Record summary
An RNA of 177 nucleotides, treated with DMS and 2A3 and read out base by base. The RNA was probed in 150 mM KOAc, 10 mM MgCl2 and 150 mM bicine (pH 8.5) at 24 C. For 2A3, 646 sequencing reads were counted. The data come from the RNA Mapping Database (RMDB), libraries RFM100 and RFMREP. Reactivities are given for positions 27 through 126. DMS adducts were read by reverse transcription with MarathonRT.

RNA sequence: GGGAACGACUCGAGUAGAGUCGAAAACUUCUGAACCACCACUGACGAAUCACAUUGAAACUAAAGAGAUGUAAUACGUCAUUUGGUGUUUCCGAAGUUUAUACUGUCAAGUUUAGCUUACUUUAACCGCGUAUAUUACCUUCGGGUAAUAUACGCGAAAAGAAACAACAACAACAAC
Reactivity to DMS in 0.01 (KOAc 150mM, MgCl2 10mM, bicine 150mM(pH8.5), 24C), signal-to-noise 2, nucleotides 027 to 126: c000u000u010c000u000g000a010a000c050c000a020c000c030a020c300u000g010a020c010g040a100a000u000c090a010c020a040u000u000g000a130a190a130c270u030a040a130a120g010a300g010a000u000g050u000a050a000u000a040c000g010u000c000a010u000u000u010g030g000u000g010u000u000u000c010c080g010a000a010g000u000u010u000a060u030a110c020u000g040u000c120a030a080g020u020u000u000a070g020c170u020u020a020c070u000u010u020a060a090c140
Reactivity to 2A3 in 0.01 (KOAc 150mM, MgCl2 10mM, bicine 150mM(pH8.5), 24C), signal-to-noise 1, nucleotides 027 to 126: c000u000u000c000u010g000a000a000c020c000a040c000c030a000c040u000g000a000c000g000a070a090u030c000a020c020a070u040u040g060a160a130a060c050u180a230a260a060g160a000g020a010u000g000u040a050a000u100a060c000g010u020c010a010u030u000u090g030g000u020g000u000u000u000c010c010g000a000a010g000u000u010u000a020u020a060c040u040g140u190c150a170a140g070u010u060u120a040g010c030u070u120a010c000u080u140u000a070a060c060